[RMDB]
RNA sequence: GGGAACGACUCGAGUAGAGUCGAAAAAGUGCGGCCGGUGAUUUGGCAGCGGGCGGACAUGGCGAACCUCCUCCCGGACCAGCCUGUUGAAAAUAGUUUUCGACAACCGUUGCACGGCACGGUAGCGAACCAGAAGUUGAUUCGUCAACUUCUGGUUAAAAGAAACAACAACAACAAC
Reactivity to 2A3 in 0.01 (KOAc 150mM, MgCl2 10mM, bicine 150mM(pH8.5), 24C), signal-to-noise 4, nucleotides 027 to 126: a000g060u070g010c020g020g010c030c080g040g040u070g070a200u140u140u250g050g000c020a020g050c000g000g010g010c040g020g010a030c030a090u160g060g030c020g020a040a060c000c010u010c000c020u000c030c020c000g030g050a080c030c020a020g050c000c010u040g030u010u030g010a030a020a000a060u300a130g080u040u040u010u020c020g010a020c000a060a030c020c000g060u080u060g010c060a080c050g050g000c030a010c010g000g030u040a020g060c020g020
Reactivity to DMS in 0.01 (KOAc 150mM, MgCl2 10mM, bicine 150mM(pH8.5), 24C), signal-to-noise 5, nucleotides 027 to 126: a040g010u010g010c010g000g030c040c020g000g010u000g000a150u010u020u010g020g010c030a070g000c010g000g000g000c100g000g000a060c120a060u030g000g020c010g010a110a080c090c060u010c030c040u010c020c000c030g000g010a090c120c090a170g000c040c020u020g010u010u000g000a010a030a030a180u040a140g000u000u000u000u000c000g000a040c020a130a060c020c010g000u010u030g010c020a080c090g010g010c090a030c030g000g000u000a130g010c040g010
About this RNA:
This 177-nucleotide RNA was probed chemically with 2A3 and DMS. As a SHAPE reagent, 2A3 marks flexible, mostly unpaired nucleotides at the ribose 2'-OH. Values are in units of 0.01, from 0 to 300, in steps of 10.